[RMDB]
RNA sequence: GGGAACGACUCGAGUAGAGUCGAAAAGAUAUGGAUCGGAGCUAAUCGAUGACUCCUAUCUCGGAAACGAGCCGAGGGAAUCAUCGAUGCCACGAUCCUAAGUCAAAUCCUGUCUUCGGACAGGAAAUCAGAGCAAAGUCUUCGGACUUUGCUCUGAAAAAGAAACAACAACAACAAC
Reactivity to DMS in 0.01 (KOAc 150mM, MgCl2 10mM, bicine 150mM(pH8.5), 24C), signal-to-noise 1, nucleotides 027 to 126: g030a050u000a300u000g000g000a040u000c000g030g000a300g020c030u020a100a070u000c010g010a010u000g030a000c080u000c000c010u000a090u000c010u000c000g030g000a120a090a250c070g010a010g030c300c100g000a140g030g010g000a010a010u000c000a010u000c000g000a000u000g000c030c230a080c000g040a000u000c000c000u010a020a110g020u000c010a110a120a140u000c020c000u000g000u000c000u000u010c300g030g000a000c000a010g000g010a000a010a040